[RMDB]
Chemical mapping of a 207-nucleotide RNA with DMS and 2A3.
For DMS the reverse transcriptase was MarathonRT.
The RNA was probed in 150 mM KOAc, 10 mM MgCl2 and 150 mM bicine (pH 8.5) at 24 C.
The data come from the RNA Mapping Database (RMDB), library OK3TST.
For DMS, 13,808 sequencing reads were counted.
RNA sequence: GGGAACGACUCGAGUAGAGUCGAAAAAGAGUUUAAACGAAUGACUAAAAUCAUAUGAUGCUAUGGCUGGGCACGGUGGCCCACACCUGUAAUCCCAGCACUUUGGGAUGCCAAAGCAAGAGGAUCACCUGAGGUUGGCAGUUCAAAACCAGCCUGGCAGUACAAUAAUGUUCGCAUUAUUGUACUGAAAAGAAACAACAACAACAAC
Reactivity to DMS in 0.01 (KOAc 150mM, MgCl2 10mM, bicine 150mM(pH8.5), 24C), signal-to-noise 4, nucleotides 027 to 156: a080g010a180g000u000u000u000a050a080a130c080g000a090a060u000g010a140c040u000a070a050a110a200u010c060a060u000a090u010g010a090u000g020c040u000a080u000g030g010c030u010g010g010g030c120a050c070g000g020u000g010g010c060c040c090a090c030a020c000c020u000g000u000a070a060u010c000c000c000a120g030c090a030c030u000u000u010g020g010g020a130u010g020c030c020a020a040a050g020c040a100a140g010a100g000g010a090u000c030a040c050c050u000g010a050g010g020u000u000g000g010c020a070g000u030u010c110a050a040a070a040c010c010a020g010c000c010u010g000g000
Reactivity to 2A3 in 0.01 (KOAc 150mM, MgCl2 10mM, bicine 150mM(pH8.5), 24C), signal-to-noise 8, nucleotides 027 to 156: a000g110a040g010u140u140u140a130a110a050c100g060a130a100u140g050a060c070u200a070a070a110a090u130c060a070u090a110u230g080a050u080g090c030u060a040u150g060g000c000u010g000g000g000c040a020c100g020g000u010g000g000c010c040c010a020c000a000c000c000u040g050u080a040a050u030c010c000c000a000g010c010a010c000u030u030u020g020g010g040a090u220g170c030c010a030a030a000g020c030a070a050g040a040g090g030a030u040c010a030c050c010u040g020a030g040g000u010u010g020g000c010a050g010u070u150c040a010a030a070a090c000c000a000g010c000c000u010g040g010